[RMDB]
RNA sequence: GGGAACGACUCGAGUAGAGUCGAAAAUGUGGCAGAUUGAAGGGUCUCAAAUUAAGCGGGCUAUGCUACGAUCCUCCGCCUGGGGAUUUGUAGAUGAAUCUAAUCAGGCUAGCUCCAUGAAAGCCUGUUGGUAGGCCAACAUGAGAGCGAAUGAUAACUAGAAUACGAUCUUCGGAUCGUAUUCUAGAAAAGAAACAACAACAACAAC
Reactivity to 2A3 in 0.01 (KOAc 150mM, MgCl2 10mM, bicine 150mM(pH8.5), 24C), signal-to-noise 6, nucleotides 027 to 156: u120g010u030g010g020c010a010g050a140u040u060g050a090a060g030g000g030u010c020u050c110a110a130a090u170u180a090a010g040c040g020g010g000c020u050a030u100g000c000u000a010c000g000a000u000c000c000u000c000c020g000c000c000u010g000g010g030g010a000u050u040u300g010u000a010g010a050u050g030a010a060u070c160u190a040a010u120c000a000g000g000c010u000a010g000c000u000c010c000a010u010g020a040a040a010g010c020c020u060g060u190u100g100g050u220a000g020g000c010c000a030a030c000a020u120g040a170g000a010g200c010g010a020a010u090g020a030u050a090a050
Reactivity to DMS in 0.01 (KOAc 150mM, MgCl2 10mM, bicine 150mM(pH8.5), 24C), signal-to-noise 2, nucleotides 027 to 156: u030g020u000g030g000c030a050g000a150u010u000g010a110a080g010g030g010u000c020u010c110a040a100a170u000u000a090a170g050c070g010g050g050c040u010a300u000g010c000u000a010c000g000a030u000c000c010u000c000c060g010c080c010u000g030g000g000g010a050u010u000u010g070u000a080g000a120u010g020a170a100u010c080u010a070a070u010c020a020g020g030c020u000a100g000c010u000c020c000a050u000g000a030a140a040g000c010c010u000g000u000u010g010g040u000a020g010g010c010c010a050a300c040a030u010g020a180g040a030g010c010g010a030a080u010g000a110u000a060a180
Overview:
The data come from the RNA Mapping Database (RMDB), library ARCHII. Chemical mapping of a 207-nucleotide RNA with 2A3 and DMS. Conditions: 150 mM KOAc, 10 mM MgCl2 and 150 mM bicine (pH 8.5), 24 C. The 2A3 profile rests on 4,069 reads. For DMS the reverse transcriptase was MarathonRT. High DMS reactivity at an A or C suggests that its Watson-Crick edge is free.